[RMDB]
RNA sequence: GGGAACGACUCGAGUAGAGUCGAAAAGUAAAGAAAGCAACGGGGCUAGCCGUCAGGUGUUCCUCCCCCCGAGAGGGGAAGAGUGAGGCUUAUCCCGGGGAACUCGGCGAAUCGUCCCCGCAUGGCACUAUAAUAGUUAGUUCGCUAACUAUUAUAGAAAAGAAACAACAACAACAAC
Reactivity to DMS in 0.01 (KOAc 150mM, MgCl2 10mM, bicine 150mM(pH8.5), 24C), signal-to-noise 5, nucleotides 027 to 126: g010u010a090a100a150g000a110a130a110g010c030a070a120c010g010g000g010g000c070u000a090g020c080c010g010u010c100a060g020g020u010g000u000u000c020c020u010c010c050c000c000c010c030g000a140g000a120g010g010g010g000a040a060g010a070g010u000g010a190g010g000c060u000u000a120u000c040c000c010g000g000g000g010a070a040c000u000c030g000g010c010g000a070a080u000c090g000u010c000c000c000c020g010c080a070u000g010g010c100a190
Reactivity to 2A3 in 0.01 (KOAc 150mM, MgCl2 10mM, bicine 150mM(pH8.5), 24C), signal-to-noise 3, nucleotides 027 to 126: g020u070a040a080a120g050a090a100a020g040c040a050a010c010g000g000g010g030c020u020a010g010c000c010g060u040c060a080g000g220u070g060u110u010c000c000u010c000c010c000c000c000c020g080a080g040a070g070g000g000g020a000a030g030a010g030u080g020a030g030g040c000u030u070a040u090c030c000c020g000g000g000g000a000a010c010u010c020g000g000c020g020a020a050u040c010g050u040c000c000c000c000g000c010a050u150g060g000c020a000